About this RNA: An RNA of 177 nucleotides, treated with DMS and read out base by base. The RNA was probed in 150 mM KOAc, 10 mM MgCl2 and 150 mM bicine (pH 8.5) at 24 C. Reactivities are rounded to 0.1 and cut off at 0 and 3.

[RMDB]
RNA sequence: GGGAACGACUCGAGUAGAGUCGAAAAUGCUCGGGGAGCAAAGCCUGGAGGCCUUCCUGCCUGCCUUCCAGCGUGGCCGCGCCCUGGCCCACCUGAGGCGGACGCAGGCAGAGAAGCUGCAGGAGCACGACUGGUGCAGGUUCGCCUGCACCAGUCGAAAAGAAACAACAACAACAAC
Reactivity to DMS in 0.01 (KOAc 150mM, MgCl2 10mM, bicine 150mM(pH8.5), 24C), signal-to-noise 1, nucleotides 027 to 126: u000g000c000u020c060g100g020g010g030a240g020c140a110a070a130g060c020c000u010g020g000a110g000g040c100c030u000u000c000c030u000g010c040c010u000g000c000c040u000u000c040c030a090g030c110g030u000g030g000c020c030g050c140g010c070c040c150u000g040g010c080c040c000a110c040c100u010g000a120g000g000c140g000g000a090c300g030c000a000g040g000c000a030g000a080g000a080a030g030c010u000g010c000a000g010g000a150g010c050a080